[RMDB]
RNA sequence: GGGAACGACUCGAGUAGAGUCGAAAAUAGAUGGACACUCACCAUCACCGCCAUUACGAUUAGGCGGCUCAGAGUGGGCUGAUCGUAGCAACCCUGUGCCUAUAGGCACAGUCGGGCCAAUGGGAAAGGGACUGAUAUUGUUCGCAAUAUCAGUCCCAAAAGAAACAACAACAACAAC
Reactivity to DMS in 0.01 (KOAc 150mM, MgCl2 10mM, bicine 150mM(pH8.5), 24C), signal-to-noise 3, nucleotides 027 to 126: u000a060g010a030u000g010g010a130c130a050c080u010c050a210c030c050a050u000c040a300c040c020g000c000c050a160u000u010a070c140g020a060u010u010a070g010g030c020g000g050c040u000c070a080g010a120g030u000g010g030g020c040u000g000a030u010c050g020u000a030g050c100a100a170c030c030c020u000g020u010g030c000c000u010a170u020a110g020g040c000a000c000a010g010u000c110g000g010g010c040c050a080a060u000g000g020g000a070a080a110
Reactivity to 2A3 in 0.01 (KOAc 150mM, MgCl2 10mM, bicine 150mM(pH8.5), 24C), signal-to-noise 3, nucleotides 027 to 126: u090a000g030a010u000g000g020a030c060a060c110u060c010a060c020c020a040u030c020a010c000c020g000c010c010a080u110u110a100c050g130a090u090u080a070g100g000c050g030g000c040u040c040a090g080a020g110u100g000g040g000c010u030g020a050u050c040g030u060a010g020c030a070a170c020c010c000u000g000u000g000c000c000u240a270u070a300g020g010c000a000c000a000g020u000c040g010g040g040c030c010a050a080u090g050g000g020a080a050a130